[RMDB]
RNA sequence: GGGAACGACUCGAGUAGAGUCGAAAAGCCGGAACCGGACCCCUACUUGGGCCAACACAUCAUCGGAAGCGGUGGCCGCCCAUGUGGCAAAACCAGCAUAGCCGCGCAUCCCCGCGGCAGUGGCCAGCGGGUACUCCGUGUUCGCACGGAGUACCCGAAAAGAAACAACAACAACAAC
Reactivity to 2A3 in 0.01 (KOAc 150mM, MgCl2 10mM, bicine 150mM(pH8.5), 24C), signal-to-noise 2, nucleotides 027 to 126: g040c000c010g000g000a090a140c020c040g080g050a060c000c000c000c010u040a070c060u120u200g040g000g000c000c020a110a000c080a020c000a080u160c030a040u050c050g060g110a120a000g030c040g060g120u030g000g000c060c000g040c010c010c010a140u210g100u080g030g040c070a020a050a050a120c030c000a000g030c030a040u110a120g000c000c000g000c000g000c070a030u010c000c010c000c000g000c000g040g000c000a010g050u000g050g000c030c010a050g020
Overview
This 177-nucleotide RNA was probed chemically with 2A3. 2A3 is a SHAPE reagent: it acylates the 2'-hydroxyl of flexible nucleotides of all four kinds. The reactions ran in a buffer of 150 mM KOAc, 10 mM MgCl2 and 150 mM bicine (pH 8.5), at 24 C. Values are in units of 0.01, from 0 to 300, in steps of 10.